[RMDB]
RNA sequence: GGGAACGACUCGAGUAGAGUCGAAAAGGGCUGAGCACUUUUGCAGUUUAUACGAACCGGUAAGUAUAUACUGCUUGGAUACGAACCGGUAAGUAUCCGAUGCUUCGGCAUCUUGUGCUCUGCCCAAGGGAAGUUGAACCUUCGGGUUCGGCUUCCCAAAAGAAACAACAACAACAAC
Reactivity to 2A3 in 0.01 (KOAc 150mM, MgCl2 10mM, bicine 150mM(pH8.5), 24C), signal-to-noise 9, nucleotides 027 to 126: g010g000g000c020u020g000a000g010c000a000c010u020u050u050u090g020c020a020g010u030u050u040a010u000a000c020g040a120a070c030c010g020g030u080a090a010g010u000a010u000a000u010a030c020u030g040c020u030u080g020g000a000u000a010c000g020a110a080c020c010g020g000u010a030a010g000u000a000u000c010c030g000a000u000g000c010u020u030c180g090g000c000a000u000c000u030u030g000u000g000c000u000c010u020g000c000c000c000a000a000
Reactivity to DMS in 0.01 (KOAc 150mM, MgCl2 10mM, bicine 150mM(pH8.5), 24C), signal-to-noise 4, nucleotides 027 to 126: g010g000g010c000u000g000a000g010c000a000c010u010u000u030u020g020c050a090g010u010u010u020a010u000a010c000g010a250a110c010c000g000g000u000a060a300g000u000a000u010a030u010a110c030u010g000c040u010u000g010g000a010u000a010c000g010a210a130c010c020g000g000u000a040a230g020u000a000u000c110c040g000a000u000g000c010u000u060c150g020g010c000a000u000c000u000u020g010u000g010c020u000c000u000g000c000c000c010a010a020
Structure probing data (2A3 and DMS) for a 177-nucleotide construct. For 2A3 the reverse transcriptase was SuperScript II with manganese. The DMS profile rests on 12,799 reads.